[RMDB]
Chemical mapping of a 207-nucleotide RNA with DMS and 2A3.
DMS adducts were read by reverse transcription with MarathonRT.
The data come from the RNA Mapping Database (RMDB), library OK3TST.
For 2A3, 1,968 sequencing reads were counted.
Conditions: 150 mM KOAc, 10 mM MgCl2 and 150 mM bicine (pH 8.5), 24 C.
For DMS, 3,925 sequencing reads were counted.

RNA sequence: GGGAACGACUCGAGUAGAGUCGAAAAUUUCACAGUUGGAAAUGACACACAUUUUGUUGCCCAGCUUCCUCAAACAUACGCUGCUGGAGGAACUGGUGUAACUGAGGCCAUCCAACAGCAAGUCAGCGGUGUGGAUCCUAAUCCACAAGUGGGGCAAAUCUCCUCAUACAUUCGUGUAUGAGGAGAUAAAAGAAACAACAACAACAAC
Reactivity to DMS in 0.01 (KOAc 150mM, MgCl2 10mM, bicine 150mM(pH8.5), 24C), signal-to-noise 2, nucleotides 027 to 156: u000u010u000c040a050c000a150g000u000u030g000g000a070a100a140u000g000a060c060a090c080a080c130a190u010u000u010u000g010u010u010g000c010c010c000a080g010c070u000u000c000c010u000c000a100a080a060c030a100u000a100c230g020c110u000g010c000u000g000g030a030g020g010a010a020c020u010g010g030u010g020u000a020a120c030u010g020a150g030g040c020c020a140u000c020c020a050a060c010a040g000c020a080a110g000u010c020a060g020c030g000g040u000g050u000g000g020a020u000c160c160u020a070a120u000c010c020a030c040a050a040g040u000g020g000g050g060c050a100a130
Reactivity to 2A3 in 0.01 (KOAc 150mM, MgCl2 10mM, bicine 150mM(pH8.5), 24C), signal-to-noise 3, nucleotides 027 to 156: u070u110u090c080a060c030a020g010u020u020g010g010a080a160a190u110g070a020c030a000c000a000c010a110u070u090u120u280g010u010u020g000c000c000c000a010g020c100u020u000c000c010u050c020a110a170a080c010a060u200a090c120g090c150u050g020c020u050g150g020a000g010g000a000a030c010u010g000g020u150g020u090a020a030c010u020g050a070g060g040c020c000a040u030c000c010a040a030c010a010g030c040a100a030g090u170c050a030g040c010g070g010u050g000u000g040g000a010u010c000c020u090a150a040u010c010c000a000c010a000a020g120u090g040g050g000g000c010a030a120